The record gives the reactivity of an RNA of 207 nucleotides to 2A3. The data come from the RNA Mapping Database (RMDB), library OK3TST. Values are in units of 0.01, from 0 to 300, in steps of 10. For 2A3 the reverse transcriptase was SuperScript II with manganese. Reactivities are given for positions 27 through 156.

[RMDB]
RNA sequence: GGGAACGACUCGAGUAGAGUCGAAAAAUCGCCGACCACACGCAGCAGCGCGACGGGAAGAUGACCCGCACCGUCAUCACGAUGCGGUACAGCGUCUACGGGCCCGCUGGUGACUGCCUGGUCGCCGAAGUGCCGGGCGAGGCGUUCGACUUCGCCGCGUUUUCAAACCAUUCGUGGUUUGAAAACGAAAAGAAACAACAACAACAAC
Reactivity to 2A3 in 0.01 (KOAc 150mM, MgCl2 10mM, bicine 150mM(pH8.5), 24C), signal-to-noise 1, nucleotides 027 to 156: a000u010c000g020c020c020g000a010c000c000a020c000a020c130g000c000a050g000c010a000g030c030g010c020g060a080c000g030g020g060a050a040g000a020u030g090a130c010c000c000g000c000a000c000c000g110u100c090a130u130c030a060c000g050a040u020g010c020g030g000u060a120c050a050g070c010g040u000c000u020a060c030g060g120g090c030c020c030g000c000u050g000g090u140g120a180c000u000g040c000c020u000g000g000u010c000g000c030c000g020a020a020g060u010g110c030c000g020g030g000c020g000a000g000g030c090g030u190u220c140g030a150c000u000u000c010g000c000c000g010